[RMDB]
Conditions: 150 mM KOAc, 10 mM MgCl2 and 150 mM bicine (pH 8.5), 24 C. An RNA of 177 nucleotides, treated with DMS and 2A3 and read out base by base.
RNA sequence: GGGAACGACUCGAGUAGAGUCGAAAAACUCCUAGAAGACCGAUAGUGGACUAGUACCGUGAGGGAAAGGUGAAAAGUACCCUGAAUAAGGGAGUGAAAUAGUACCUGAAACCUAGCGCUUACAAGCUUAAAUGAAAAUGUUCGCAUUUUCAUUUAAAAAAGAAACAACAACAACAAC
Reactivity to DMS in 0.01 (KOAc 150mM, MgCl2 10mM, bicine 150mM(pH8.5), 24C), signal-to-noise 9, nucleotides 027 to 126: a100c100u010c000c010u000a070g020a120a080g000a090c060c050g000a110u020a070g030u020g000g010a120c050u010a080g010u010a090c300c020g010u010g010a080g000g000g010a050a140a030g010g000u000g000a070a090a080a140g000u040a090c000c000c000u000g000a110a070u030a150a030g000g010g010a110g020u010g010a080a060a070u010a090g010u030a030c010c010u000g010a070a130a230c040c010u010a130g010c020g010c080u010u010a070c130a070a100g010c150
Reactivity to 2A3 in 0.01 (KOAc 150mM, MgCl2 10mM, bicine 150mM(pH8.5), 24C), signal-to-noise 6, nucleotides 027 to 126: a000c020u020c010c000u030a070g070a130a030g040a070c030c030g110a120u130a130g100u120g080g030a060c020u020a020g030u040a040c000c050g030u060g070a080g020g010g010a040a060a040g030g020u050g030a010a100a010a000g050u110a120c010c000c000u010g010a060a030u210a140a010g010g000g020a020g020u080g040a000a030a040u120a050g060u060a020c000c010u010g020a100a040a010c010c000u000a010g020c030g010c040u090u090a040c030a080a020g020c010
It was measured as part of the RMDB libraries RFM100 and RFMREP.
Values cover nucleotides 27 to 126.